[RMDB]
RNA sequence: GGGAACGACUCGAGUAGAGUCGAAAAGCUGAUGCUUGGCGGUGGCGACCGAGCGUCCAGGCCAAGCGUGGCGUCGACAAGGUGUCGAGAUAGGAGUGUCAUCGGUACCUGGUCGCAUAAUGAGGGGCGUACGGCUCAGGGCCGAAAGGCAGCAGGCGAAUACGGUGGACUUCGGUCCACCGUAUUCAAAAGAAACAACAACAACAAC
Reactivity to 2A3 in 0.01 (KOAc 150mM, MgCl2 10mM, bicine 150mM(pH8.5), 24C), signal-to-noise 1, nucleotides 027 to 156: g000c000u110g050a070u110g040c000u000u000g000g040c000g090g060u080g070g010c000g030a080c020c070g080a090g000c000g050u000c000c020a050g040g170c040c040a020a020g020c040g000u030g050g000c090g030u150c020g000a000c000a000a080g020g000u030g000u020c000g000a010g010a040u150a060g050g160a190g090u070g060u040c170a190u030c110g000g000u070a030c000c000u000g010g010u020c000g010c050a080u150a300a120u190g010a050g030g000g000g000c070g010u060a030c260g100g000c020u020c100a080g020g030g140c000c040g040a030a000a050g020g000c010a010g000c060a040g080g080c070